RNA sequence: GGGAACGACUCGAGUAGAGUCGAAAAUCUUCAGGUUGACACGUGGCAUUCCAGACUAUAAGGAGGGUGUCGACUUUGUAGGCAGAGCUACCGUGGUAACAGUUAGAGAGCACGAAGGACAAUGGGAUAUGUGUACCCUUUUCGAAGGGUACACAUAAAAAGAAACAACAACAACAAC
Reactivity to DMS in 0.01 (KOAc 150mM, MgCl2 10mM, bicine 150mM(pH8.5), 24C), signal-to-noise 4, nucleotides 027 to 126: u000c020u010u000c050a060g000g020u000u010g000a050c020a020c050g020u000g020g020c090a150u000u000c030c020a130g000a170c140u010a100u010a080a090g020g000a100g010g020g000u000g010u010c020g010a040c020u000u010u000g010u010a020g000g030c070a080g000a080g020c040u000a060c070c090g020u010g010g010u010a040a070c070a050g000u000u020a070g010a120g000a070g010c040a050c090g000a070a070g000g020a050c100a040a090u020g010g000g010a200
Reactivity to 2A3 in 0.01 (KOAc 150mM, MgCl2 10mM, bicine 150mM(pH8.5), 24C), signal-to-noise 2, nucleotides 027 to 126: u030c000u100u160c040a040g030g000u000u030g000a000c010a010c030g100u120g100g000c050a050u100u010c010c010a070g130a170c110u130a080u050a300a070g030g010a010g010g060g000u020g020u010c000g020a010c000u080u050u150g060u030a020g040g020c060a030g000a010g100c020u040a040c040c040g010u040g030g030u040a080a030c020a030g020u070u090a060g020a000g000a010g070c020a000c100g030a040a040g000g010a010c010a020a070u080g050g000g060a030

About this RNA: An RNA of 177 nucleotides, treated with DMS and 2A3 and read out base by base. For 2A3, 2,526 sequencing reads were counted. Values cover nucleotides 27 to 126. For 2A3 the reverse transcriptase was SuperScript II with manganese. Source: RMDB library OK2TST, as collected in RNAgym.